Structure probing data (DMS and 2A3) for a 177-nucleotide construct.
[RMDB]
RNA sequence: GGGAACGACUCGAGUAGAGUCGAAAAGAAGAACAGUGCCUCACACUGUUGAGGAAAACAAACUGUGUGGAUAGCACACAACUAUCAAACAAAUUGCUGUGAACGACAGCACGUUCAAAGAAAGAAAGGGAAUCAAAGAGUUCGCUCUUUGAUUCCCAAAAGAAACAACAACAACAAC
Reactivity to DMS in 0.01 (KOAc 150mM, MgCl2 10mM, bicine 150mM(pH8.5), 24C), signal-to-noise 1, nucleotides 027 to 126: g000a090a220g000a180a000c110a040g050u000g000c070c110u000c190a110c000a010c110u000g000u050u000g000a050g000g040a040a130a040a140c070a050a090a070c000u000g030u030g010u000g000g000a040u000a000g000c060a230c300a130c160a010a050c000u000a000u060c000a110a170a050c180a010a000a060u000u000g000c010u000g000u030g000a060a010c190g090a040c000a000g000c000a060c030g000u010u000c000a160a040a000g000a220a100a060g000a000a100a060
Reactivity to 2A3 in 0.01 (KOAc 150mM, MgCl2 10mM, bicine 150mM(pH8.5), 24C), signal-to-noise 1, nucleotides 027 to 126: g240a110a000g040a060a000c220a050g000u000g130c040c000u060c000a000c000a040c050u120g000u140u000g000a060g000g170a000a070a000a080c000a000a000a000c140u000g000u000g000u000g140g000a130u090a150g070c110a000c000a010c000a010a010c010u050a060u110c040a110a000a000c000a050a200a020u000u140g000c000u000g000u040g130a300a080c050g150a000c030a060g040c030a070c000g060u060u080c000a040a040a030g090a000a210a080g100a000a160a130

Description
The DMS profile rests on 892 reads. For 2A3 the reverse transcriptase was SuperScript II with manganese. Conditions: 150 mM KOAc, 10 mM MgCl2 and 150 mM bicine (pH 8.5), 24 C.